Structure probing data (DMS and 2A3) for a 207-nucleotide construct.
[RMDB]
RNA sequence: GGGAACGACUCGAGUAGAGUCGAAAACUGAUCUCGAUCCUUCAGAGGAUCUCUCGAUCCUCUAGUCCUAGAGCUCUCUCUGACUCUAGGAUCUCCUGAGACUCUAGGACUGAAGAGGACUGAAGUCCUAGUCGAAGGACUUCCUAGAGCUAGGAUCCAAACCUCUGUCAUUCGUGACAGAGGUUUGAAAAGAAACAACAACAACAAC
Reactivity to DMS in 0.01 (KOAc 150mM, MgCl2 10mM, bicine 150mM(pH8.5), 24C), signal-to-noise 2, nucleotides 027 to 156: c060u010g000a090u000c020u000c000g000a070u000c010c010u010u010c110a160g010a040g040g010a020u000c020u010c070u000c100g030a050u010c010c000u000c010u000a080g000u020c020c030u000a020g010a030g020c130u000c050u000c060u010c020u010g020a030c020u000c040u000a100g000g020a020u010c030u000c020c030u010g030a300g020a040c000u000c020u000a020g020g030a060c020u010g000a140a080g010a160g010g010a250c030u000g000a170a080g000u000c000c010u000a080g010u000c060g000a300a080g020g010a070c020u000u000c010c000u000a030g000a140g020c070u000a060g000g000a130u000c020
Reactivity to 2A3 in 0.01 (KOAc 150mM, MgCl2 10mM, bicine 150mM(pH8.5), 24C), signal-to-noise 3, nucleotides 027 to 156: c070u080g040a120u040c070u060c130g040a040u000c010c010u050u050c040a010g010a010g030g010a020u020c060u000c000u030c070g060a100u040c000c050u060c060u060a060g050u060c020c030u050a040g000a010g040c020u000c010u010c010u020c040u040g020a060c000u000c030u090a030g000g010a000u010c010u030c010c020u030g020a020g000a020c020u060c100u140a000g010g000a000c010u000g000a020a010g030a060g110g220a110c030u030g050a010a000g010u010c000c000u010a020g040u020c020g010a010a020g000g000a010c000u020u000c000c000u000a010g010a010g010c020u050a020g000g010a010u000c020

Source: RMDB library OK3TST, as collected in RNAgym. High DMS reactivity at an A or C suggests that its Watson-Crick edge is free.